The data come from the RNA Mapping Database (RMDB), library OK3TST. Structure probing data (DMS and 2A3) for a 207-nucleotide construct. 2A3 adducts were read by reverse transcription with SuperScript II with manganese. For DMS, 3,892 sequencing reads were counted.

RNA sequence: GGGAACGACUCGAGUAGAGUCGAAAAGCUUCAUGAAGGAGGCCCUGCUGCGGCACGCCGUCGACCCGGCAACGUGGCCCGCGCUGACGCACCAGUUCUUCGACCUCGUCAACGGGCCGCUCUUUGACGGCAGCGCGCACAACUUCGCGCAGCCGCCUCUAAACUACGAUUUCGAUCGUAGUUUAGAAAAAGAAACAACAACAACAAC
Reactivity to DMS in 0.01 (KOAc 150mM, MgCl2 10mM, bicine 150mM(pH8.5), 24C), signal-to-noise 3, nucleotides 027 to 156: g010c020u000u010c070a130u010g010a170a210g030g000a080g020g000c020c040c080u020g010c020u010g030c030g000g020c020a130c080g010c000c020g030u000c020g040a110c100c010c070g000g010c080a090a050c130g000u000g010g000c020c000c020g000c010g040c010u000g000a080c000g030c090a060c070c020a070g020u000u010c070u000u000c060g020a050c010c010u030c010g030u010c050a180a040c010g000g030g000c010c000g020c020u000c070u000u000u020g000a020c000g010g000c010a250g010c060g000c030g110c100a300c030a100a080c100u020u000c020g040c030g000c020a220g010c010c040g020c000c080
Reactivity to 2A3 in 0.01 (KOAc 150mM, MgCl2 10mM, bicine 150mM(pH8.5), 24C), signal-to-noise 4, nucleotides 027 to 156: g030c010u040u020c040a130u240g170a120a070g060g020a020g030g010c010c010c030u110g050c080u070g000c020g010g010c010a010c080g000c000c010g010u000c020g030a070c060c050c000g060g020c110a110a030c060g010u030g010g000c010c000c000g000c000g020c000u000g000a010c000g000c020a090c040c050a070g040u090u090c050u140u150c090g050a060c020c030u020c000g010u010c000a290a300c040g000g000g000c000c000g000c000u010c010u060u060u090g000a010c000g010g000c020a010g000c010g000c010g020c010a040c030a280a180c060u160u100c060g000c000g000c010a020g000c000c000g000c000c000